[RMDB]
RNA sequence: GGGAACGACUCGAGUAGAGUCGAAAAGUCCACCAGAAGCACAUUGCACGGGCAGUGCGCUUCUGAUGGGCCUGACCUGGUUUCGACAGGGGGAGAUAGGGUCGUGAGGCAACUCGUCAGAGAAGACUACGAGGAUCUGAUUCGUCAGAUCCUCGUAAAAAGAAACAACAACAACAAC
Reactivity to DMS in 0.01 (KOAc 150mM, MgCl2 10mM, bicine 150mM(pH8.5), 24C), signal-to-noise 2, nucleotides 027 to 126: g010u000c000c000a000c010c000a000g000a040a000g000c000a040c000a000u020u000g010c000a180c300g010g000g000c010a010g000u000g020c090g010c000u000u010c000u000g010a020u000g000g010g010c000c040u000g000a100c010c020u010g010g010u010u030u000c090g010a090c060a090g000g000g000g000g000a070g010a090u000a110g020g000g010u010c090g010u020g010a160g000g010c050a040a130c070u020c040g000u010c140a070g000a130g010a100a080g000a100c130
Reactivity to 2A3 in 0.01 (KOAc 150mM, MgCl2 10mM, bicine 150mM(pH8.5), 24C), signal-to-noise 3, nucleotides 027 to 126: g000u030c000c010a010c000c000a000g000a000a000g000c010a000c000a040u000u020g030c040a080c280g050g300g000c010a010g010u000g010c010g020c000u020u000c010u010g000a000u010g000g010g000c010c010u010g010a020c000c010u030g090g010u020u080u110c070g030a030c050a080g010g000g030g050g020a070g000a080u080a070g050g000g000u020c040g030u080g050a040g020g000c010a030a050c050u020c050g070u060c060a020g020a000g020a190a030g010a030c050